[RMDB]
RNA sequence: GGGAACGACUCGAGUAGAGUCGAAAAGUGGAGGAGAGACCACCUCCAGAGGACCCCUUCAGCGAACAGAAGAGCUCCCUCCUCCGGAGAGAGAAGACCAUAGCGAUAGGGGGAGAUGCUAGGAGUACGAGACUCAACUUCGGUUGAGUCAAAAGAAACAACAACAACAAC
Reactivity to DMS in 0.01 (KOAc 150mM, MgCl2 10mM, bicine 150mM(pH8.5), 24C), signal-to-noise 9, nucleotides 027 to 129: g030u000g000g020a020g020g020a080g000a130g010a040c090c070a130c090c000u000c020c010a010g020a090g000g030a150c070c030c010c040u020u020c130a020g020c060g030a070a050c150a090g030a090a090g000a120g040c040u000c040c050c010u040c030c010u050c100c140g060g000a060g000a100g020a000g000a090a050g000a050c110c040a100u020a140g030c060g000a030u030a060g030g020g000g020g010a040g000a080u040g030c000u020a020g000g000a060g030u040a080c070g010a140
Reactivity to 2A3 in 0.01 (KOAc 150mM, MgCl2 10mM, bicine 150mM(pH8.5), 24C), signal-to-noise 9, nucleotides 027 to 129: g110u050g020g010a020g020g020a070g000a040g040a090c020c020a050c010c000u000c000c000a010g020a020g020g040a070c000c000c000c010u050u110c050a030g020c020g050a060a040c030a100g110a100a010g020a070g040c010u010c020c000c000u010c010c010u060c030c100g040g000a040g000a000g000a000g010a100a010g040a010c030c010a110u120a050g050c040g060a040u130a110g010g000g000g030g000a020g000a000u100g010c050u040a010g010g040a030g040u100a060c080g030a030